Annotation: Chemical mapping of a 207-nucleotide RNA with 2A3. Source: RMDB library M2RFPK, as collected in RNAgym.
RNA sequence: GGGAACGACUCGAGUAGAGUCGAAAAGUUUACGCUCCAAGAUCGGUGGAUAGCAGCCCUAUCAAUAUCUAGGAGAACUGUGCUAUGUUUAGAAGAUUAGGUAGUCUCUAAAGAGAACAAUUUACCUCAUACGUUAGGACGUUCGCGUCCUAACGAACUCGAAGCGUUAGUUCGCUAACGCUUCGAGAAAAGAAACAACAACAACAAC
Reactivity to 2A3 in 0.01 (KOAc 150mM, MgCl2 10mM, bicine 150mM(pH8.5), 24C), signal-to-noise 1, nucleotides 027 to 156: g000u050u080u030a130c120g020c030u000c000c000a090a000g010a040u020c070g050g260u090g060g040a010u010a010g040c090a030g040c010c000c000u050a030u010c010a000a090u040a040u180c030u070a100g000g010a010g030a010a060c040u040g000u030g030c040u050a010u250g070u030u000u090a110g000a150a020g000a030u170u030a030g070g000u000a000g000u010c000u010c000u060a070a120a000g010a000g030a120a000c110a030a010u110u060u030a050c000c000u040c000a010u080a140c030g000u000u000a000g000g000a010c000g010u040u040c200g030c000g130u000c000c000u000a000a000c000g000a040a030
Values are in units of 0.01, from 0 to 300, in steps of 10.